RNA sequence: GGGAACGACUCGAGUAGAGUCGAAAAGAUAUGGACCACAGCCUUCAACAGCUAGCCAUCGGAAACGAUGGUCUAGACAUGAAGACUGUGGUCCUAAGUCAAACGCGGAAACUUCGGUUUCCGCGAAGAUUAAGUACAUGUUCGCAUGUACUUAAUCAAAAGAAACAACAACAACAAC
Reactivity to DMS in 0.01 (KOAc 150mM, MgCl2 10mM, bicine 150mM(pH8.5), 24C), signal-to-noise 8, nucleotides 027 to 126: g000a020u000a140u010g000g000a010c000c000a000c000a010g010c010c000u000u000c000a100a080c300a170g010c000u000a010g000c000c000a010u000c000g010g000a060a040a070c000g010a010u000g000g010u010c010u000a000g000a020c080a300u010g010a010a010g000a010c000u000g040u000g000g010u000c000c000u000a000a030g000u000c010a110a100a250c020g010c000g000g000a010a010a010c000u000u010c220g030g010u000u000u000c000c000g020c000g000a010a030
Reactivity to 2A3 in 0.01 (KOAc 150mM, MgCl2 10mM, bicine 150mM(pH8.5), 24C), signal-to-noise 7, nucleotides 027 to 126: g020a000u030a010u060g000g010a010c000c000a000c000a010g010c010c020u070u040c110a300a160c040a220g020c010u000a000g000c000c000a000u010c000g020g000a020a000a010c010g000a000u000g000g020u050c000u000a000g000a000c040a300u300g000a000a000g010a000c000u000g000u000g000g000u000c000c000u000a000a000g000u000c010a010a020a030c030g000c000g000g010a010a000a010c010u080u140c300g140g000u000u000u000c000c000g010c000g000a000a000
An RNA of 177 nucleotides, treated with DMS and 2A3 and read out base by base. Values are in units of 0.01, from 0 to 300, in steps of 10. For 2A3 the reverse transcriptase was SuperScript II with manganese. Source: RMDB library TTRDES, as collected in RNAgym.